[RMDB]
RNA sequence: GGGAACGACUCGAGUAGAGUCGAAAAAGGCGCCUGCCAAGACCGCCUCUGUCAAUCAAGGGCGAAGGCCGGGGGCUAGAAGGCGAUCAGACACCACCGUAUUCCCGGCCGUAAACGGUGCCGCCCCGGCAACCUUCAAGUUCGCUUGAAGGUUGCCAAAAGAAACAACAACAACAAC
Reactivity to 2A3 in 0.01 (KOAc 150mM, MgCl2 10mM, bicine 150mM(pH8.5), 24C), signal-to-noise 2, nucleotides 027 to 126: a000g010g000c020g000c000c050u080g000c040c000a000a020g070a120c030c000g000c010c050u050c030u080g160u140c120a150a070u030c040a170a100g070g010g010c030g050a140a030g000g000c020c000g010g000g010g020g040c110u100a050g050a160a030g050g000c020g030a030u110c100a000g090a030c030a030c070c020a040c000c010g060u050a030u000u060c000c000c000g020g010c000c000g000u010a030a040a000c080g000g000u000g000c010c000g030c000c000c000c000
Reactivity to DMS in 0.01 (KOAc 150mM, MgCl2 10mM, bicine 150mM(pH8.5), 24C), signal-to-noise 1, nucleotides 027 to 126: a050g000g030c050g010c040c000u020g050c130c060a010a150g000a040c260c040g000c000c070u000c010u000g040u000c150a200a240u070c020a030a080g000g000g000c000g010a180a090g010g040c000c010g000g030g010g010g000c130u020a150g000a050a160g020g000c030g020a030u010c180a100g000a160c130a040c000c050a090c060c030g000u090a230u000u010c010c000c020g040g000c000c010g000u020a000a020a160c110g000g010u000g050c050c000g000c000c000c000c280

The record gives the reactivity of an RNA of 177 nucleotides to 2A3 and DMS.
The data come from the RNA Mapping Database (RMDB), library RFM100.
The reactions ran in a buffer of 150 mM KOAc, 10 mM MgCl2 and 150 mM bicine (pH 8.5), at 24 C.
For DMS, 1,020 sequencing reads were counted.